This 177-nucleotide RNA was probed chemically with DMS and 2A3.
The reactions ran in a buffer of 150 mM KOAc, 10 mM MgCl2 and 150 mM bicine (pH 8.5), at 24 C.
For DMS, 12,243 sequencing reads were counted.
It was measured as part of the RMDB library M2PK90.
RNA sequence: GGGAACGACUCGAGUAGAGUCGAAAAAAAUUAUGGUCGCCGGCACGUAUGUGCACACCGAGAAUGACACUCUUUCGCCGACAACCGUGUCGGUAGUCUUGCACAUCAGGAAUCCGUCUGCGUUGAAUAGCUGUUAAAAAUUCGUUUUUAACAGCUAAAAAGAAACAACAACAACAAC
Reactivity to DMS in 0.01 (KOAc 150mM, MgCl2 10mM, bicine 150mM(pH8.5), 24C), signal-to-noise 8, nucleotides 027 to 126: a070a050a060u010u010a060u010g000g000u000c040g030c040c040g010g020c070a080c070g010u010a030u010g010u010g000c020a070c260a050c110c130g000a070g000a080a050u000g010a090c110a090c090u000c040u000u000u000c120g010c010c010g000a010c030a070a090c260c230g010u010g010u000c000g010g010u000a020g010u000c060u010u000g010c040a020c030a030u000c040a090g000g000a060a060u010c030c030g000u000c050u010g010c050g000u000u000g010a100a140
Reactivity to 2A3 in 0.01 (KOAc 150mM, MgCl2 10mM, bicine 150mM(pH8.5), 24C), signal-to-noise 4, nucleotides 027 to 126: a000a000a000u260u100a130u130g050g000u040c040g010c020c020g000g030c030a020c080g110u190a030u120g030u050g040c020a000c010a010c030c050g040a040g050a130a090u150g030a030c010a030c100u070c030u050u180u140c080g000c000c000g020a010c010a050a110c120c110g120u050g000u060c000g010g000u020a030g010u000c040u030u050g000c030a020c010a050u020c030a010g050g060a030a030u030c020c000g070u020c040u010g020c030g060u050u070g030a060a030
Source information:
Values are in units of 0.01, from 0 to 300, in steps of 10.